[RMDB]
RNA sequence: GGGAACGACUCGAGUAGAGUCGAAAAAGCAUCUGCAUUUACAGUGUAAUCAGUAUCUUUGGUAAGAUCUUUAGAAUCGCCAUUUGUUGUAGAAGCUGUAUCGCUACCUUUAGCAAACUUUGAAAUCAUGCUGGCUAAAUUUCGAUUUAGCCAGCAUAAAAGAAACAACAACAACAAC
Reactivity to DMS in 0.01 (KOAc 150mM, MgCl2 10mM, bicine 150mM(pH8.5), 24C), signal-to-noise 1, nucleotides 027 to 126: a020g020c020a040u010c050u000g000c060a090u010u010u010a050c040a060g000u000g020u000a140a070u010c030a050g010u020a010u000c060u000u020u000g000g030u010a080a110g000a010u000c000u000u000u000a110g010a080a020u000c040g000c030c000a030u000u000u000g010u000u000g010u020a020g020a100a240g000c000u000g020u000a020u020c040g000c010u000a120c110c060u010u020u000a020g010c060a020a070a110c150u000u000u010g000a050a090a080u000c170
Reactivity to 2A3 in 0.01 (KOAc 150mM, MgCl2 10mM, bicine 150mM(pH8.5), 24C), signal-to-noise 1, nucleotides 027 to 126: a060g040c030a040u060c020u120g040c030a000u060u040u040a040c050a010g000u030g000u110a100a060u060c000a010g070u020a110u080c040u020u070u070g020g000u050a260a040g010a020u010c020u100u300u000a060g070a100a000u020c060g040c010c000a030u000u040u090g010u030u000g100u120a010g000a090a000g040c000u000g000u030a040u090c010g000c000u000a070c030c000u120u210u000a060g060c040a140a060a060c030u140u120u200g020a050a030a030u140c070

Chemical mapping of a 177-nucleotide RNA with DMS and 2A3. The RNA was probed in 150 mM KOAc, 10 mM MgCl2 and 150 mM bicine (pH 8.5) at 24 C.